Source: RMDB library OK1LIB, as collected in RNAgym. Structure probing data (DMS and 2A3) for a 177-nucleotide construct. DMS adducts were read by reverse transcription with MarathonRT. 2A3 adducts were read by reverse transcription with SuperScript II with manganese.
[RMDB]
RNA sequence: GGGAACGACUCGAGUAGAGUCGAAAACGGUGGAGACGUACUCGUCGUCCAGCUCGGUGGCCAGCUGCUGCGCGGUGGUGAUCGCCGCUAACGACUCGCGGGACAGCUGCGGCUGCGUGCUGGCUCCCCUGCAUGUGCAAUUCGUUGCACAUGCAGGAAAAGAAACAACAACAACAAC
Reactivity to DMS in 0.01 (KOAc 150mM, MgCl2 10mM, bicine 150mM(pH8.5), 24C), signal-to-noise 3, nucleotides 027 to 126: c060g060g030u020g020g000a160g010a050c050g020u020a170c270u040c020g000u000c000g000u010c020c000a040g000c030u020c010g050g040u020g000g030c000c010a010g000c000u040g010c010u000g010c030g000c000g000g000u000g000g010u010g050a210u020c030g020c000c060g010c030u000a030a130c140g000a130c130u040c160g000c010g010g000g010a070c040a300g000c000u000g000c040g000g000c030u000g000c010g010u030g000c000u000g020g000c030u010c050c000
Reactivity to 2A3 in 0.01 (KOAc 150mM, MgCl2 10mM, bicine 150mM(pH8.5), 24C), signal-to-noise 7, nucleotides 027 to 126: c030g020g030u050g060g040a030g010a020c030g050u120a120c120u050c140g020u060c030g150u030c020c010a050g020c060u080c100g070g030u100g030g000c000c000a000g000c000u030g000c000u010g020c150g010c010g060g010u080g010g130u100g060a240u090c060g040c200c000g000c020u030a100a030c100g170a120c090u050c130g010c010g010g000g060a060c000a010g010c000u030g010c010g190g030c030u020g010c030g060u060g000c000u000g000g000c000u020c000c000